[RMDB]
RNA sequence: GGGAACGACUCGAGUAGAGUCGAAAACACCAGGGUUGAAAACCUGGGGGAUGACCUGUGGUUAGGGGUGAAAGGCCAAUCAAACUCCGUGAUAGCUGGUUCUCCCCGAAAUGCAUUUAGGUGCAGCCAUUAUCUUCGGUUUCGACCGAAGAUAAUGAAAAGAAACAACAACAACAAC
Reactivity to 2A3 in 0.01 (KOAc 150mM, MgCl2 10mM, bicine 150mM(pH8.5), 24C), signal-to-noise 2, nucleotides 027 to 126: c050a020c010c000a010g040g000g020u060u100g120a060a060a030a040c000c010u020g000g000g000g020g020a040u080g050a030c010c030u040g010u060g060g080u060u090a040g000g000g040g000u010g050a080a050a050g090g010c050c030a030a020u040c020a050a090a060c050u020c070c000g000u020g040a030u020a040g030c010u030g150g100u080u000c020u010c020c000c010c000g000a000a030a020u050g020c000a010u040u090u200a170g000g060u020g000c000a010g050c030
Reactivity to DMS in 0.01 (KOAc 150mM, MgCl2 10mM, bicine 150mM(pH8.5), 24C), signal-to-noise 9, nucleotides 027 to 126: c050a150c140c000a030g010g010g010u000u000g010a180a120a110a140c010c000u000g000g010g010g010g010a080u010g000a040c020c010u000g020u000g010g010u000u000a220g010g000g000g010u000g010a040a140a300g000g010c080c090a050a080u000c070a050a120a090c100u010c100c100g010u010g010a040u000a220g010c010u000g000g010u000u010c190u000c010c010c010c030g010a030a040a050u010g000c010a020u000u000u010a080g000g000u000g010c020a060g000c180

An RNA of 177 nucleotides, treated with 2A3 and DMS and read out base by base. The data come from the RNA Mapping Database (RMDB), library OK2TRN.